[RMDB]
Structure probing data (2A3 and DMS) for a 177-nucleotide construct. For 2A3 the reverse transcriptase was SuperScript II with manganese. Source: RMDB library OK1LIB, as collected in RNAgym.

RNA sequence: GGGAACGACUCGAGUAGAGUCGAAAAGGAGAUCGAAGAGGACCGACGUCAGCACGGUCUGGAUGUAGGUCCGCAUGCAUCCCAGUUGACGAAACUUCACGAUUUCCAAAGCGGACAAGAAGUCAAAAGUGGGUAAAUAUUUCGAUAUUUACCCACUAAAAGAAACAACAACAACAAC
Reactivity to 2A3 in 0.01 (KOAc 150mM, MgCl2 10mM, bicine 150mM(pH8.5), 24C), signal-to-noise 9, nucleotides 027 to 126: g010g000a010g000a000u010c010g040a230a040g030a110g090g110a040c020c050g040a040c010g060u090c050a020g020c090a030c130g100g100u070c090u050g000g010a000u010g010u000a010g010g000u000c000c000g000c010a000u010g000c000a000u010c000c000c010a010g020u030u040g020a020c040g050a070a090a110c020u020u010c030a020c040g010a010u000u010u000c000c010a040a030a010g010c010g000g000a000c010a040a050g150a130a020g070u110c070a080a070a010
Reactivity to DMS in 0.01 (KOAc 150mM, MgCl2 10mM, bicine 150mM(pH8.5), 24C), signal-to-noise 8, nucleotides 027 to 126: g000g000a010g000a030u000c010g000a180a160g020a100g000g000a060c110c070g000a110c060g000u010c060a060g020c060a190c140g010g010u030c070u000g010g010a010u000g010u000a080g000g010u000c010c000g010c010a040u000g010c020a020u010c030c010c300a080g020u000u000g000a140c100g000a100a040a070c010u010u000c050a170c050g000a050u000u000u000c000c000a050a070a120g000c010g000g010a010c010a160a110g010a100a120g010u020c080a030a080a140